This 177-nucleotide RNA was probed chemically with 2A3. Values cover nucleotides 27 to 126. The data come from the RNA Mapping Database (RMDB), library OK1LIB.
[RMDB]
RNA sequence: GGGAACGACUCGAGUAGAGUCGAAAAAUCCGGGACACGCGCAGCGCCGGCGAUCGGACCGGAAGUCGACAAAAUCGUUGCGUCGCACGUCGUAUUGCACAAUGGGCACGCAAGGAGAGUUGCGCAGCGGAUCCUGAUGCUUCGGCAUCAGGAUCCGAAAAGAAACAACAACAACAAC
Reactivity to 2A3 in 0.01 (KOAc 150mM, MgCl2 10mM, bicine 150mM(pH8.5), 24C), signal-to-noise 2, nucleotides 027 to 126: a000u000c000c000g000g020g030a050c030a010c120g050c000g010c020a020g000c060g000c020c020g000g090c090g050a240u240c030g120g080a110c010c010g000g020a090a040g040u000c010g130a080c130a010a060a000a250u050c100g020u000u000g000c000g000u040c140g000c000a040c000g010u000c010g030u070a120u120u300g090c070a080c010a090a070u110g020g000g010c000a000c000g000c000a030a030g160g000a000g000a000g010u000u070g000c000g030c000a000g030